Structure probing data (2A3 and DMS) for a 207-nucleotide construct. For DMS the reverse transcriptase was MarathonRT.

RNA sequence: GGGAACGACUCGAGUAGAGUCGAAAAAGAGGCGAUACGUCGCCUCAAGCUUGGUGCUUAGCUUCUUUCACCAAGCAUAUCACACGCGGAUAACCGCCAAAGGAGAAACACUGACUACGGUCAGUGAGGAAGUUGGUUCGGUUCGCCGAACCAACAAGUUAAUAUGUCGGUUCGCCGACAUAUUAACAAAAGAAACAACAACAACAAC
Reactivity to 2A3 in 0.01 (KOAc 150mM, MgCl2 10mM, bicine 150mM(pH8.5), 24C), signal-to-noise 6, nucleotides 027 to 156: a000g000a010g000g010c020g000a000u040a060c200g090u010c000g000c000c000u010c000a010a000g000c000u000u000g000g000u010g000c040u060u040a050g070c000u040u030c000u010u030u010c000a000c000c000a000a000g000c010a020u060a020u080c040a040c010a020c100g050c080g030g010a100u100a300a230c020c010g060c060c040a040a050a020g030g000a000g050a030a090a010c020a000c000u000g000a000c000u010a020c190g070g000u010c000a000g000u020g010a010g040g060a120a080g000u000u000g000g000u000u000c000g000g020u020u020c110g050c060c000g000a000a000c000c010a000a000c000a000a000
Reactivity to DMS in 0.01 (KOAc 150mM, MgCl2 10mM, bicine 150mM(pH8.5), 24C), signal-to-noise 2, nucleotides 027 to 156: a060g000a030g030g020c010g000a010u000a080c240g000u000c000g030c020c030u000c000a010a050g010c020u010u010g000g010u000g000c080u010u000a050g010c130u000u000c010u000u000u000c000a070c030c000a050a030g020c030a090u010a000u000c080a070c050a120c140g000c010g060g000a140u000a180a200c020c000g030c020c080a040a100a110g020g010a070g000a220a090a150c020a040c000u000g010a040c000u000a070c300g050g010u000c010a020g020u010g010a050g010g020a070a140g000u000u000g000g010u000u000c000g040g000u000u010c300g020c000c000g000a010a000c000c000a010a000c000a040a040

In probing experiments dimethyl sulfate is read out at A N1 and C N3, which are open when not base-paired. It was measured as part of the RMDB library M2RFPK. Conditions: 150 mM KOAc, 10 mM MgCl2 and 150 mM bicine (pH 8.5), 24 C. The DMS profile rests on 4,205 reads.